[RMDB]
RNA sequence: GGGAACGACUCGAGUAGAGUCGAAAAGCCUUACCAAUGUCGAAAGACGGUAAGGUGAGGAAAGUCCGGGCUCCACGGAAAUACGGUGCCGGAUAACGUCCGGCGGGGGCGACCCCAGGGAAAGUGCAAAUACAAGAUGAUUCGUCAUCUUGUAUUUAAAAGAAACAACAACAACAAC
Reactivity to 2A3 in 0.01 (KOAc 150mM, MgCl2 10mM, bicine 150mM(pH8.5), 24C), signal-to-noise 9, nucleotides 027 to 126: g010c000c000u000u000a000c000c010a180a160u300g010u010c000g040a090a030a020g000a010c010g000g000u000a000a000g010g000u020g000a040g010g100a120a070a020g050u020c020c000g020g050g020c020u030c040c020a070c060g070g090a090a090a030u220a080c100g080g020u080g020c000c000g000g000a020u040a070a050c080g090u000c000c000g000g000c010g000g010g000g000g000c020g020a090c000c000c000c010a010g060g020g000a060a120a020g110u110g060c060
Reactivity to DMS in 0.01 (KOAc 150mM, MgCl2 10mM, bicine 150mM(pH8.5), 24C), signal-to-noise 9, nucleotides 027 to 126: g000c010c000u000u000a000c000c000a220a140u050g010u000c000g000a140a090a140g000a010c010g000g020u000a010a010g000g020u000g010a070g010g000a070a080a100g010u010c010c010g010g010g010c040u010c040c030a210c060g000g000a050a070a100u030a100c110g000g010u010g020c000c000g000g000a020u000a070a080c170g010u000c000c000g000g010c020g010g000g000g000g000c120g000a200c030c010c000c020a110g000g000g000a050a050a070g000u010g010c150
Background
Structure probing data (2A3 and DMS) for a 177-nucleotide construct. The RNA was probed in 150 mM KOAc, 10 mM MgCl2 and 150 mM bicine (pH 8.5) at 24 C. It was measured as part of the RMDB libraries RFM100 and RFMREP. Values cover nucleotides 27 to 126. For DMS the reverse transcriptase was MarathonRT.